Structure probing data (DMS and 2A3) for a 177-nucleotide construct.
The 2A3 profile rests on 2,963 reads.
2A3 adducts were read by reverse transcription with SuperScript II with manganese.
RNA sequence: GGGAACGACUCGAGUAGAGUCGAAAAAACCGUAAAUUCGUUUACGGUUAACCGCAACCGAGCCGAAAGGCAUUUUAAGCGUACGGUGGCGAAAGCCUAAAAUACCAUAGGCCUUCGGGCCUAUGAAAAGUAUCAGUUCAUUCGUGAACUGAUACUUAAAAGAAACAACAACAACAAC
Reactivity to DMS in 0.01 (KOAc 150mM, MgCl2 10mM, bicine 150mM(pH8.5), 24C), signal-to-noise 4, nucleotides 027 to 126: a030a010c000c000g020u000a000a010a030u000u010c140g020u000u000u000a010c000g000g000u000u000a030a110c070c000g020c050a050a040c040c020g020a150g010c000c010g010a100a100a150g010g020c030a060u000u010u010u010a050a150g010c150g010u000a070c050g000g010u010g000g010c010g000a070a040a120g010c000c000u000a030a040a080a060u010a080c180c000a020u000a000g010g010c000c000u000u010c150g010g010g010c000c010u000a000u000g000a040a040
Reactivity to 2A3 in 0.01 (KOAc 150mM, MgCl2 10mM, bicine 150mM(pH8.5), 24C), signal-to-noise 2, nucleotides 027 to 126: a000a010c010c000g000u010a040a020a030u110u100c150g060u090u010u010a010c000g000g000u010u000a020a000c040c010g000c030a030a020c020c010g040a000g000c000c010g050a050a020a000g000g000c000a000u020u050u040u080a110a010g040c020g040u060a030c030g100g000u030g020g000c010g030a130a030a010g040c000c010u090a090a100a070a070u100a050c040c010a000u000a000g000g000c000c010u010u030c110g060g010g010c000c010u010a000u010g000a000a000
Reactivities are rounded to 0.1 and cut off at 0 and 3. DMS adducts were read by reverse transcription with MarathonRT.